[RMDB]
RNA sequence: GGGAACGACUCGAGUAGAGUCGAAAAUACGCAUGUAUACUCAUUUGCCAGUGUUGAGUACAGGAAACAGCACAAGACAAAACAAAUAAAUACCUUUUCAGAUUACAACAUGGAUCUGCAAGACUUGGUAGAGAUUUGAAAAUAUUAAUACCAGUGAAUUGUAUCGGGAGUUCGCUCCCGAUACAAUAAAAGAAACAACAACAACAAC
Reactivity to 2A3 in 0.01 (KOAc 150mM, MgCl2 10mM, bicine 150mM(pH8.5), 24C), signal-to-noise 1, nucleotides 027 to 156: u150a010c000g000c010a050u090g040u150a030u030a050c030u040c050a030u110u050u140g060c040c030a020g040u030g080u050u000g020a050g060u060a100c040a010g080g000a040a080a000c000a020g110c040a010c060a120a000g140a050c020a030a060a000a050c040a010a100a040u140a040a130a000u100a050c000c000u000u040u060u170c020a010g000a100u000u060a240c090a160a070c070a200u170g040g000a010u010c000u060g000c060a050a030g100a110c020u150u090g000g000u000a020g010a000g010a050u000u040u120g000a040a050a020a020u210a000u100u150a050a070u090a040c010c010a040g070u030g110a060